[RMDB]
RNA sequence: GGGAACGACUCGAGUAGAGUCGAAAAUAACAGUGUCAUGGCGUGAGAACGUCAUUUAAUUAGCAAUGACUGUAUGCUAAUUGAAUUGUGUGAGAACACAAUGAUGCUGUUUAACAGUCAUUGAUACGAACUUGUGGUAUUUCGAUAUUACAAGUUCAAAAGAAACAACAACAACAAC
Reactivity to 2A3 in 0.01 (KOAc 150mM, MgCl2 10mM, bicine 150mM(pH8.5), 24C), signal-to-noise 9, nucleotides 027 to 126: u090a000a000c000a000g000u000g010u010c000a000u010g000g000c000g000u020g040a090g010a050a010c000g000u000c000a000u000u000u000a000a000u000u000a000g000c010a000a020u060g000a000c000u000g000u010a010u060g000c000u000a000a000u000u000g010a000a000u000u000g000u000g000u010g050a090g020a040a000c000a000c000a000a000u000g000a000u000g000c000u000g000u000u000u010a010a000c000a000g000u000c000a010u030u240g100a070u060a080c090
Reactivity to DMS in 0.01 (KOAc 150mM, MgCl2 10mM, bicine 150mM(pH8.5), 24C), signal-to-noise 9, nucleotides 027 to 126: u020a010a010c010a010g010u000g010u000c010a020u000g010g000c010g010u000g000a250g000a160a010c000g010u000c000a010u000u000u010a000a000u000u000a000g010c000a050a100u000g000a010c000u000g010u000a180u010g000c000u000a000a010u000u000g010a010a000u000u000g000u000g000u000g000a260g000a210a020c000a000c000a000a000u000g010a010u000g010c000u000g000u000u000u010a060a020c000a000g000u000c000a160u030u030g010a110u030a090c240
The record gives the reactivity of an RNA of 177 nucleotides to 2A3 and DMS. Reactivities are given for positions 27 through 126. 2A3 adducts were read by reverse transcription with SuperScript II with manganese. It was measured as part of the RMDB library OK1LIB. The RNA was probed in 150 mM KOAc, 10 mM MgCl2 and 150 mM bicine (pH 8.5) at 24 C. High 2A3 reactivity points to a flexible backbone, as in loops and unpaired stretches.